[RMDB]
RNA sequence: GGGAACGACUCGAGUAGAGUCGAAAAGCGUAACCCACCCGAGUCCGGCCGGGGCGAGGACCUUGGUCAGCUGCUUCCGGACGCUGCCCGGAUCGCGGAGGGUCCCGUUCGUGCUUGGGAAGACGACGUCGUGGACGUUGGCGACGGUCACGGCGAGGUACGUUAUUCUGUUCGCAGAAUAACGUACAAAAGAAACAACAACAACAAC
Reactivity to DMS in 0.01 (KOAc 150mM, MgCl2 10mM, bicine 150mM(pH8.5), 24C), signal-to-noise 1, nucleotides 027 to 156: g000c100g010u020a060a160c050c000c010a200c030c000c020g000a050g010u000c240c010g020g040c120c030g000g000g000g000c000g010a170g010g020a050c010c020u010u020g030g010u000c020a120g040c040u000g000c020u000u000c010c060g030g040a060c060g000c080u000g050c010c000c010g030g000a020u000c090g020c040g010g020a120g040g000g000u000c000c000c010g040u050u000c020g000u000g020c010u000u000g060g000g000a080a050g010a150c030g000a130c020g010u000c000g090u030g000g010a020c030g010u000u000g000g000c160g000a260c000g000g000u000c030a050c000g040g000c000g000a120g030
Reactivity to 2A3 in 0.01 (KOAc 150mM, MgCl2 10mM, bicine 150mM(pH8.5), 24C), signal-to-noise 4, nucleotides 027 to 156: g060c030g050u060a080a090c000c000c000a020c000c010c000g010a010g030u000c010c000g000g000c000c000g000g010g000g000c020g040a150g080g050a040c020c040u210u300g140g010u110c070a040g030c030u060g010c000u100u010c010c010g050g000a090c080g070c130u110g020c000c000c020g030g000a060u060c090g010c020g030g040a060g070g100g030u000c000c000c010g010u000u010c010g020u020g010c000u000u020g020g010g010a060a040g080a040c070g010a030c000g010u000c000g010u010g020g020a020c000g010u030u060g100g010c090g050a010c000g010g000u010c000a000c000g000g000c020g010a020g010
Structure probing data (DMS and 2A3) for a 207-nucleotide construct.
DMS adducts were read by reverse transcription with MarathonRT.
The RNA was probed in 150 mM KOAc, 10 mM MgCl2 and 150 mM bicine (pH 8.5) at 24 C.
Reactivities are given for positions 27 through 156.
The DMS profile rests on 3,410 reads.